[RMDB]
RNA sequence: GGGAACGACUCGAGUAGAGUCGAAAAGAUAUGGACUACUACCCACCUCGGGGACCCUAUGAAGUCGGAAACGAUGGAGGGUUGCACGAGAGGUAGUCCUAAGUCAAAAGGCGCCUUCGGGCGCCAAGUAUGUAGACGAGUUCGCUCGUCUACAUACAAAAGAAACAACAACAACAAC
Reactivity to DMS in 0.01 (KOAc 150mM, MgCl2 10mM, bicine 150mM(pH8.5), 24C), signal-to-noise 2, nucleotides 027 to 126: g010a130u000a120u010g010g030a000c010u000a030c020u000a100c000c010c000a300c110c020u000c000g000g000g000g000a010c000c000c010u000a200u030g020a140a190g000u000c000g000g000a090a120a140c010g000a020u030g000g000a010g000g000g000u000u000g020c080a080c000g000a020g020a100g000g010u000a010g020u000c000c000u010a050a140g020u000c200a030a100a120a150g000g010c010g000c000c000u000u000c140g030g000g000c010g020c000c010a010a020
Reactivity to 2A3 in 0.01 (KOAc 150mM, MgCl2 10mM, bicine 150mM(pH8.5), 24C), signal-to-noise 1, nucleotides 027 to 126: g060a070u300a300u250g000g020a030c000u030a010c000u120a120c000c000c090a030c030c000u000c000g060g030g020g000a000c010c010c000u300a300u300g030a040a010g020u010c000g030g000a060a000a100c020g020a010u000g030g010a010g000g000g030u020u070g200c040a020c010g020a000g040a040g000g000u000a000g000u030c010c000u060a110a010g070u100c080a080a080a050a120g000g000c010g030c000c020u110u220c300g140g000g000c020g000c040c000a000a000